[RMDB]
RNA sequence: GGGAACGACUCGAGUAGAGUCGAAAAUGGUACAUUAAGCCUUGGGAUUUUGAUUUGAGGCAAAUGCUGACACCAGGCUUAGAGACGGUUUUAAACUACGUGGACAAUGCUGGCAAGUACUGGACAAGGAGUGCUACUAAUCUCGGGGUCAGAGUGGUAGUAUCACUUGGUUCGCCAAGUGAUACUAAAAAGAAACAACAACAACAAC
Reactivity to 2A3 in 0.01 (KOAc 150mM, MgCl2 10mM, bicine 150mM(pH8.5), 24C), signal-to-noise 4, nucleotides 027 to 156: u120g010g010u060a030c030a090u120u050a040a010g000c020c030u050u130g010g000g040a110u120u090u060u200g180a200u130u080u160g090a080g020g000c000a020a090a080u230g000c040u030g030a030c020a040c060c000a000g020g000c000u000u020a010g010a010g020a060c060g010g020u070u030u030u150a060a110a020c080u100a020c060g030u080g000g010a020c030a020a090u060g020c040u020g060g040c000a040a010g030u030a080c040u090g050g000a050c020a040a030g020g000a020g020u020g030c000u010a070c020u020a010a100u040c030u040c070g040g000g020g020u020c020a010g010a000g050u020g010g040
Reactivity to DMS in 0.01 (KOAc 150mM, MgCl2 10mM, bicine 150mM(pH8.5), 24C), signal-to-noise 3, nucleotides 027 to 156: u010g000g020u000a040c040a090u000u010a030a100g030c050c000u010u010g040g020g010a210u000u010u000u000g010a140u020u010u020g000a220g040g010c030a060a060a090u010g000c050u010g020a200c080a130c050c030a050g010g010c020u000u000a050g000a190g000a080c030g020g010u010u010u010u000a010a070a100c060u000a050c040g040u000g030g000a100c110a060a100u010g010c040u000g000g020c040a080a080g010u010a050c040u010g010g010a120c050a040a080g030g010a080g040u000g030c010u010a090c050u000a060a060u000c030u000c040g000g010g020g020u000c090a160g000a090g020u000g010g020